[RMDB]
RNA sequence: GGGAACGACUCGAGUAGAGUCGAAAAUGGUCUGUGGUGAAUGUAGUCAAGUGCGAUAAUGCCAGCGGACGCAACGGCCUCUUGAUAGAUAUGGUAGAGUUCCGUGGUACGCGGAUCAUGACAGCCAGCAUAGCAAAAUCUUCGGAUUUUGCUAUGCAAAAGAAACAACAACAACAAC
Reactivity to DMS in 0.01 (KOAc 150mM, MgCl2 10mM, bicine 150mM(pH8.5), 24C), signal-to-noise 3, nucleotides 027 to 126: u010g000g000u000c020u000g020u000g040g020u020g020a110a080u000g010u000a100g020u000c060a060a070g000u000g020c010g010a130u000a140a100u020g000c030c020a170g030c090g010g000a050c060g000c090a110a050c030g000g020c300c000u010c030u000u010g000a120u000a100g030a150u000a030u000g000g030u000a030g000a060g000u000u000c010c010g000u000g000g000u010a090c060g000c010g000g000a070u010c030a040u010g010a070c130a070g010c010c030a130
Reactivity to 2A3 in 0.01 (KOAc 150mM, MgCl2 10mM, bicine 150mM(pH8.5), 24C), signal-to-noise 2, nucleotides 027 to 126: u040g020g030u060c030u000g070u030g070g070u040g040a200a100u150g060u100a090g050u070c080a160a020g070u070g200c000g000a040u090a160a070u210g010c000c000a040g050c000g050g020a010c020g000c090a020a040c010g030g000c010c000u000c020u000u120g050a090u090a210g120a080u110a080u240g150g000u080a020g030a000g060u240u130c010c010g010u000g000g000u090a040c010g050c000g040g000a030u050c030a020u030g060a020c000a010g110c010c030a020